[RMDB]
RNA sequence: GGGAACGACUCGAGUAGAGUCGAAAACGACCUGCUGCUGUGGCUGACGCGGGAAUCGUUCGAGCGCAGGGCCGAAGGCGACGCGCUGAGGAUUGUCGAGUUCGAGCACCGCACGGUAUCGCCCGACGAUCUGCCGCCGAAAGCUGCGAAGCAGCUCCCCGGGGAAAGAAUUCGUUCUUUCCCCGGGAAAAGAAACAACAACAACAAC
Reactivity to 2A3 in 0.01 (KOAc 150mM, MgCl2 10mM, bicine 150mM(pH8.5), 24C), signal-to-noise 1, nucleotides 027 to 156: c070g070a060c010c030u000g010c010u000g000c010u000g010u010g000g000c000u010g010a000c040g010c010g020g000g040a050a050u020c050g100u230u130c030g090a000g000c010g080c100a210g000g040g100c010c010g110a120a080g220g030c060g020a040c040g110c000g000c160u210g020a170g070g030a160u120u090g140u130c060g040a030g110u060u010c020g030a070g050c090a260c140c000g080c070a020c090g020g050u170a110u200c020g010c000c000c000g000a000c000g000a010u000c010u270g060c000c000g010c000c020g030a090a000a070g020c000u000g000c000g070a060a000g040c000a000g000c010u090c030
An RNA of 207 nucleotides, treated with 2A3 and read out base by base.
Reactivities are rounded to 0.1 and cut off at 0 and 3.
Conditions: 150 mM KOAc, 10 mM MgCl2 and 150 mM bicine (pH 8.5), 24 C.
Source: RMDB library OK3TST, as collected in RNAgym.
Values cover nucleotides 27 to 156.
The 2A3 profile rests on 507 reads.